[RMDB]
RNA sequence: GGGAACGACUCGAGUAGAGUCGAAAAGAGGGACGGAGAAGUGAAAGCAACACGUACGGACAGAAGUGUACGUCUAAGUGCGUAGGUAUUGGAACUGUAGGCAAAUCCGCAGAUCUAGCUGAAACAUAUCUAAAUUGCGAUUCGUCGCAAUUUAGAUAAAAGAAACAACAACAACAAC
Reactivity to DMS in 0.01 (KOAc 150mM, MgCl2 10mM, bicine 150mM(pH8.5), 24C), signal-to-noise 5, nucleotides 027 to 126: g000a090g000g020g030a060c090g030g000a080g020a080a100g010u030g000a090a070a080g000c040a060a090c120a010c080g010u010a060c040g020g020a050c090a080g010a080a070g010u020g000u000a040c090g010u000c060u010a060a090g020u010g000c020g010u000a060g000g010u020a080u020u020g000g000a030a080c050u010g010u000a080g000g010c150a060a100a130u020c040c020g010c040a040g000a040u000c060u000a080g030c030u000g000a080a100a100c200a130u010
Reactivity to 2A3 in 0.01 (KOAc 150mM, MgCl2 10mM, bicine 150mM(pH8.5), 24C), signal-to-noise 7, nucleotides 027 to 126: g090a020g010g030g010a020c060g020g040a040g030a100a040g030u060g090a140a040a000g020c020a020a040c010a000c070g010u050a010c020g040g090a020c040a050g150a170a040g110u080g030u140a040c040g010u000c040u110a150a040g010u020g030c010g010u030a040g040g000u090a100u100u180g020g000a020a020c000u020g000u070a100g040g020c040a040a030a050u100c020c020g010c010a000g000a010u000c010u030a030g020c020u020g030a100a030a030c030a010u040